Chemical mapping of a 177-nucleotide RNA with DMS and 2A3. The RNA was probed in 150 mM KOAc, 10 mM MgCl2 and 150 mM bicine (pH 8.5) at 24 C. For DMS, 6,686 sequencing reads were counted.
[RMDB]
RNA sequence: GGGAACGACUCGAGUAGAGUCGAAAAGCAGACAGAGCCAGCGAGAGCAUCAUUGGUGCCAUAGCGAGGCAGUUCAAGUUCUCCCGGGUAUGCAAACCGAAAUCAUCGCUUGAAGAGACAGAAGUGCCAGUGGUACAGAAUUCGUUCUGUACCACUGAAAAGAAACAACAACAACAAC
Reactivity to DMS in 0.01 (KOAc 150mM, MgCl2 10mM, bicine 150mM(pH8.5), 24C), signal-to-noise 6, nucleotides 027 to 126: g020c060a090g010a060c080a100g010a120g020c030c020a170g010c080g000a120g000a160g010c040a030u000c060a130u000u000g030g010u000g010c020c030a080u010a170g010c060g010a110g010g010c030a060g000u010u000c080a040a070g010u000u000c050u010c010c010c030g000g000g000u010a030u000g010c100a060a090a070c050c050g000a040a080a080u000c080a050u000c100g010c060u000u000g010a100a070g000a090g000a080c090a070g000a080a070g010u000g010c100
Reactivity to 2A3 in 0.01 (KOAc 150mM, MgCl2 10mM, bicine 150mM(pH8.5), 24C), signal-to-noise 4, nucleotides 027 to 126: g000c020a000g030a060c020a010g090a010g090c010c000a010g030c030g040a070g010a010g050c010a020u040c010a070u080u250g020g010u020g000c010c010a080u110a040g030c030g060a130g010g000c020a010g000u070u080c040a060a030g010u050u010c020u030c030c000c000g000g010g020u100a080u130g060c030a080a040a050c030c030g040a060a050a020u080c030a010u070c050g020c050u020u060g050a100a040g030a010g010a050c020a050g080a120a010g070u060g100c000